[RMDB]
RNA sequence: GGGAACGACUCGAGUAGAGUCGAAAAGGAGUGCUACCGAAAGGUAGCACUCCAACAAAUCGGUGUAAGUUAAGCCUGUCUUACACCGUGCGGCACAGCGGAAACGCUGAUGUCGUAUACACGGCUAGGAUAAUUAUCAGUUCGCUGAUAAUUAUCCAAAAGAAACAACAACAACAAC
Reactivity to 2A3 in 0.01 (KOAc 150mM, MgCl2 10mM, bicine 150mM(pH8.5), 24C), signal-to-noise 3, nucleotides 027 to 126: g000g000a010g000u010g000c000u000a000c020c000g070a100a080a070g000g010u000a000g000c000a000c000u000c000c000a000a000c000a000a000a000u070c000g000g000u000g010u010a010a010g000u040u080a040a010g010c020c040u090g110u110c000u000u000a000c000a000c000c000g000u010g010c010g010g000c000a000c000a010g000c000g020g020a080a070a010c010g000c000u000g000a020u000g000u000c000g000u000a000u010a020c100a010c040g020g000c010u040a110
Reactivity to DMS in 0.01 (KOAc 150mM, MgCl2 10mM, bicine 150mM(pH8.5), 24C), signal-to-noise 4, nucleotides 027 to 126: g010g020a040g010u010g000c000u000a010c000c000g000a120a110a170g010g010u010a000g000c000a000c000u000c000c000a030a070c090a020a040a030u000c000g000g020u000g010u000a000a010g000u000u000a070a220g000c000c020u000g010u000c000u000u000a010c000a010c000c000g010u000g000c020g000g000c010a010c000a010g000c000g020g000a140a130a210c010g020c000u000g000a060u000g040u000c000g010u000a050u000a090c190a050c140g000g020c000u000a140